Structure probing data (DMS) for a 177-nucleotide construct.
DMS adducts were read by reverse transcription with MarathonRT.
It was measured as part of the RMDB library TTRINS.
The reactions ran in a buffer of 150 mM KOAc, 10 mM MgCl2 and 150 mM bicine (pH 8.5), at 24 C.
For DMS, 5,712 sequencing reads were counted.

RNA sequence: GGGAACGACUCGAGUAGAGUCGAAAAGAUAUGGACAAUCAAUAGAGAAGAAUCAUGCUACCCACCGAUGUACUCGGAAACGAGUACCAUCGAGGCAUGAGUUCUUCUCUAUUGAUUGUCCUAAGUCCAAGCUGUAAUUCUUCGGAAUUACAGCUUGAAAAGAAACAACAACAACAAC
Reactivity to DMS in 0.01 (KOAc 150mM, MgCl2 10mM, bicine 150mM(pH8.5), 24C), signal-to-noise 5, nucleotides 027 to 126: g000a090u010a300u000g010g010a010c000a000a000u000c010a010a000u000a000g000a020g020a020a010g010a020a040u000c000a000u000g010c010u000a050c050c060c150a300c120c010g000a010u000g020u000a000c000u000c000g000g000a120a100a120c000g010a020g000u000a010c300c100a000u010c000g000a090g000g000c010a000u000g000a020g010u010u000c000u010u000c000u000c000u010a000u000u000g010a000u000u000g010u000c000c000u000a010a060g000u000c030